Structure probing data (DMS and 2A3) for a 177-nucleotide construct. Reactivities are given for positions 27 through 126. For 2A3 the reverse transcriptase was SuperScript II with manganese.
[RMDB]
RNA sequence: GGGAACGACUCGAGUAGAGUCGAAAACAUGUACGCUUCAAGUGCGGCGGUCGGCCAGAGUCGACCGGCUUCCUAGCGCGUAGGACGUCCGAUGGGGAUGACAUCGUGGUGGUGUGCCGCGCCACCGUCUAGGGUGGGUCUUCGGGCCUACUCUAGAAAAAGAAACAACAACAACAAC
Reactivity to DMS in 0.01 (KOAc 150mM, MgCl2 10mM, bicine 150mM(pH8.5), 24C), signal-to-noise 9, nucleotides 027 to 126: c080a090u020g010u010a030c040g010c030u010u020c110a110a090g020u020g010c090g010g010c020g010g000u000c010g010g000c010c230a130g010a140g010u000c010g000a030c010c000g000g000c030u000u000c030c010u000a080g010c220g010c050g010u000a050g000g000a080c050g000u010c030c020g010a070u020g000g010g010g010a090u020g010a090c080a040u020c060g010u020g000g020u010g000g000u000g000u020g010c020c050g010c050g000c010c000a010c010c010g000
Reactivity to 2A3 in 0.01 (KOAc 150mM, MgCl2 10mM, bicine 150mM(pH8.5), 24C), signal-to-noise 9, nucleotides 027 to 126: c050a040u110g040u090a020c010g010c030u060u090c070a070a040g040u020g060c000g010g010c000g000g000u000c000g000g000c010c050a070g030a040g060u020c000g000a020c000c000g020g000c000u020u000c000c000u020a030g020c060g000c020g070u030a030g020g050a030c030g020u010c010c010g050a100u100g030g010g020g060a060u070g020a030c010a060u060c050g070u060g010g000u010g000g000u030g030u080g030c000c010g000c000g000c000c000a000c000c000g010

The RNA was probed in 150 mM KOAc, 10 mM MgCl2 and 150 mM bicine (pH 8.5) at 24 C.